An RNA of 207 nucleotides, treated with 2A3 and DMS and read out base by base. Conditions: 150 mM KOAc, 10 mM MgCl2 and 150 mM bicine (pH 8.5), 24 C. The data come from the RNA Mapping Database (RMDB), library OK3TST. The DMS profile rests on 5,660 reads. For 2A3 the reverse transcriptase was SuperScript II with manganese.
RNA sequence: GGGAACGACUCGAGUAGAGUCGAAAAAAAGUGGAUUAUCUCAAAGAAUACAUACCGAAAGCAUUUAAAAAAGCUACGUCUAUCGUAUUGGAUUCUGAAAUUGUUCUUGUAGACGAACAUAAUGUACCGCUCCCGUUUGGAAGUUUAGGAAUACACAUCAUAGCACUUUAUUCGUAAAGUGCUAUGAAAAAGAAACAACAACAACAAC
Reactivity to 2A3 in 0.01 (KOAc 150mM, MgCl2 10mM, bicine 150mM(pH8.5), 24C), signal-to-noise 2, nucleotides 027 to 156: a000a000a000g050u070g000g020a080u050u020a100u160c030u060c100a080a120a000g060a030a010u040a070c040a020u030a000c040c080g050a090a050a030g000c040a050u040u170u300a060a130a040a030a050a010g020c000u000a020c010g060u000c020u070a070u080c010g030u010a030u020u170g080g010a040u060u020c000u070g020a060a060a110u040u040g020u010u040c010u010u110g080u140a060g050a100c140g000a030a010c000a000u110a060a030u160g020u040a070c010c000g000c000u000c020c000c020g030u050u020u070g040g020a090a040g010u040u050u160a030g040g060a010a060u110a060c050a010c000a080
Reactivity to DMS in 0.01 (KOAc 150mM, MgCl2 10mM, bicine 150mM(pH8.5), 24C), signal-to-noise 3, nucleotides 027 to 156: a060a050a120g020u010g010g000a190u000u000a080u000c050u010c060a040a110a120g000a080a080u000a040c010a090u010a190c070c010g010a110a050a090g010c020a110u010u010u010a000a120a090a080a050a100g000c010u000a050c040g020u000c040u000a060u000c070g000u000a100u000u000g030g000a100u000u000c010u000g010a050a050a080u010u010g010u000u000c040u000u010g020u000a090g030a110c100g030a060a050c030a060u000a060a080u000g010u000a070c030c010g000c000u010c010c000c020g000u000u010u000g050g010a020a060g010u000u000u020a080g020g020a210a120u000a080c050a040c040a120